RNA sequence: GGGAACGACUCGAGUAGAGUCGAAAACUCCAUCUACGGAUGGAGAAGUCGAUAGCUUCGGCUAUCGACACUUGAAUGCGUGAGCAUUCAAGAAGAACUACUCGUGAGAGUAGUUCAAGCCAGCGUUCGCGCUGGCAAGCUUGUCUACGGACAAGCACACAGCGGUGACGCUGUGAGCCACUCUUCGGAGUGGCAACGGUAACACGUGAGUGUUACCGACCUCUUCGUGAGAAGAGGAAUGGUGCCCAUCAACCAUAUGAUGGGAUACGGACUCGUUCGCGAGUCCGAAAAGAAACAACAACAACAAC
Reactivity to DMS in 0.01 (KOAc 150mM, MgCl2 10mM, bicine 150mM(pH8.5), 24C), signal-to-noise 1, nucleotides 027 to 266: c000u000c000c000a000u010c010u010a080c170g040g000a010u000g000g000a020g000a020a060g060u010c000g010a000u010a000g010c000u000u010c150g000g000c000u000a010u010c000g000a010c000a050c030u020u000g000a010a000u010g000c030g000u040g000a110g000c000a030u010u010c000a000a030g000a300a170g000a010a000c000u000a000c010u000c020g000u010g000a130g010a030g010u000a010g000u000u000c040a130a190g020c030c000a000g000c040g070u000u000c300g030c020g010c000u020g000g000c010a020a020g000c000u020u000g000u000c000u020a140c200g020g010a030c000a010a000g000c010a130c020a000c000a000g000c050g000g000u010g000a190c000g030c000u000g000u000g000a100g000c000c000a010c020u020c010u000u030c220g030g010a070g010u000g010g000c010a020a030c040g040g010u000a000a000c000a020c010g010u030g000a160g010u000g000u000u000a000c000c020g020a050c010c020u000c010u000u000c020g010u010g010a220g020a020a010g030a000g000g010a110a030u010g000g010u000g000c000c000c000a000u010c000a000a050c050c040a060u050a020u010g000a030u020g010g000g030a080u010a010
Reactivity to 2A3 in 0.01 (KOAc 150mM, MgCl2 10mM, bicine 150mM(pH8.5), 24C), signal-to-noise 6, nucleotides 027 to 266: c010u000c000c000a000u000c000u020a050c270g120g000a000u010g000g000a010g000a030a030g010u000c000g000a000u000a010g000c000u060u040c300g110g000c000u020a010u010c000g000a010c000a010c000u000u000g000a000a000u000g010c020g040u100g050a030g000c000a000u000u000c000a000a000g030a020a020g000a010a000c000u000a000c000u000c010g020u070g070a100g000a000g020u000a000g000u000u000c000a000a000g010c000c010a000g000c000g040u100u110c140g020c000g010c110u000g000g000c010a010a020g010c000u000u010g000u020c010u010a040c260g080g000a000c000a000a000g000c000a010c000a000c000a000g010c010g030g120u120g060a030c010g000c000u000g010u000g000a010g000c000c000a010c000u010c010u040u080c260g140g000a000g000u000g000g000c000a010a010c000g000g000u000a000a000c000a010c010g070u080g110a070g010u000g010u000u000a000c000c000g020a040c000c010u010c010u010u000c010g070u050g070a110g000a020a000g010a000g000g070a010a050u210g000g000u050g100c010c010c000a000u000c000a000a030c010c070a080u020a040u130g010a000u000g010g000g010a000u030a000
Structure probing data (DMS and 2A3) for a 307-nucleotide construct. The RNA was probed in 150 mM KOAc, 10 mM MgCl2 and 150 mM bicine (pH 8.5) at 24 C. Source: RMDB library POS240, as collected in RNAgym.